Chemical mapping of a 177-nucleotide RNA with DMS and 2A3. For DMS the reverse transcriptase was MarathonRT. It was measured as part of the RMDB library TTRDEL. For 2A3, 4,287 sequencing reads were counted.
[RMDB]
RNA sequence: GGGAACGACUCGAGUAGAGUCGAAAAGAUAUGGAUAUCAGCGAGCGCACACUAUUAUUUCGGAAACGAAAUAACGAAUGUGCGGCUCGCUAUGACGUCCUAAGUCAAAGUCAGGUUCGCCUGACAACCGUAUUGUAUGCUUCGGCAUACAAUACGGAAAAGAAACAACAACAACAAC
Reactivity to DMS in 0.01 (KOAc 150mM, MgCl2 10mM, bicine 150mM(pH8.5), 24C), signal-to-noise 2, nucleotides 027 to 126: g020a050u010a300u000g000g030a000u010a050u010c000a030g010c000g000a010g010c000g010c000a000c000a020c030u020a290u000u000a000u000u000u010c000g000g030a120a070a280c020g000a000a000a000u010a000a000c060g020a030a060u010g000u010g000c010g030g000c000u000c000g010c000u010a020u010g010a010c010g030u000c000c000u020a040a180g010u000c010a080a100a190g020u000c010a000g010g040u000u010c250g030c020c000u000g010a000c010a050a070
Reactivity to 2A3 in 0.01 (KOAc 150mM, MgCl2 10mM, bicine 150mM(pH8.5), 24C), signal-to-noise 2, nucleotides 027 to 126: g040a020u100a050u180g010g010a000u010a010u070c000a000g010c010g010a010g040c010g000c010a000c000a010c040u030a010u080u000a020u010u010u000c000g040g040a080a070a020c010g000a000a010a030u030a020a020c060g130a300a300u030g000u000g000c000g050g020c000u000c010g010c000u020a010u020g000a000c020g010u030c000c000u030a160a010g040u030c060a200a020a010g000u020c000a000g000g090u050u110c270g060c070c010u020g000a010c000a010a020